Chemical mapping of a 177-nucleotide RNA with DMS. Reactivities are given for positions 27 through 126. For DMS the reverse transcriptase was MarathonRT.
RNA sequence: GGGAACGACUCGAGUAGAGUCGAAAAGCAAUGACGAUGCCGGCCGCGGCGACCAGCACCCCCAGGGCGAUCGCGACACGGCGCCGCGCUCGGCGGGACAGUCGCGGGCGUCCGUAGCGGGCGUCUGCAAACGCGGAACAUUCGUGUUCCGCGUUUGAAAAGAAACAACAACAACAAC
Reactivity to DMS in 0.01 (KOAc 150mM, MgCl2 10mM, bicine 150mM(pH8.5), 24C), signal-to-noise 2, nucleotides 027 to 126: g000c180a110a070u010g000a080c060g000a160u000g000c020c000g000g010c300c030g000c030g010g010c040g000a070c040c020a180g010c060a210c080c010c010c040c140a140g020g010g020c020g020a070u000c090g010c050g010a100c110a110c170g000g020c030g020c020c010g000c070g040c090u000c000g030g000c020g000g000g030a090c120a110g010u010c070g020c010g010g010g010c000g010u000c000c000g000u010a090g030c130g000g000g000c000g000u000c010u000g020